[RMDB]
About this RNA
Conditions: 150 mM KOAc, 10 mM MgCl2 and 150 mM bicine (pH 8.5), 24 C. An RNA of 207 nucleotides, treated with 2A3 and DMS and read out base by base. For 2A3, 7,219 sequencing reads were counted. For DMS, 9,827 sequencing reads were counted. Source: RMDB library OK3TST, as collected in RNAgym.
RNA sequence: GGGAACGACUCGAGUAGAGUCGAAAAGGAUGGCAGUACCAUUGGAUUCAUCUGCUACAGCACCAUGCAAAUUGAUUUUUGUGUCUGCCAAGAAGGGUAACUCUUUUAUUAUCCCUAGAGGUGGGUCCCAAGGAGUCACAUUGGCAGGGUAUUAUAACGAUUAUAAAUCGUUCGCGAUUUAUAAUCGAAAAGAAACAACAACAACAAC
Reactivity to 2A3 in 0.01 (KOAc 150mM, MgCl2 10mM, bicine 150mM(pH8.5), 24C), signal-to-noise 8, nucleotides 027 to 156: g080g010a090u050g010g000c020a010g020u050a060c040c020a100u090u200g070g030a060u110u090c050a070u050c050u020g030c010u070a060c030a040g060c030a040c040c020a060u110g020c030a030a070a110u090u090g060a090u040u070u050u060u070g020u010g010u030c000u000g000c010c010a000a020g070a020a040g090g000g000u050a040a030c010u040c020u060u090u050u040a120u120u080a080u150c010c000c000u060a060g030a030g080g070u050g010g000g020u020c020c010c000a020a040g040g000a030g040u050c030a010c020a110u020u030g010g000c010a020g050g000g010u110a090u240u160a100u160a130a030
Reactivity to DMS in 0.01 (KOAc 150mM, MgCl2 10mM, bicine 150mM(pH8.5), 24C), signal-to-noise 4, nucleotides 027 to 156: g010g000a080u000g000g020c020a090g020u010a300c050c020a150u000u000g030g010a170u000u000c040a070u010c040u010g020c030u000a110c070a110g000c050a070c040c040a090u000g010c040a020a040a080u000u000g020a190u000u000u000u000u000g020u010g020u010c010u000g010c000c020a040a150g010a100a100g020g000g010u000a020a020c030u000c150u000u000u000u010a060u000u000a050u010c000c000c010u000a110g010a150g010g030u000g000g010g010u000c030c020c080a100a060g010g000a080g000u000c020a060c080a150u000u000g010g000c020a050g010g020g000u000a050u000u010a080u000a080a260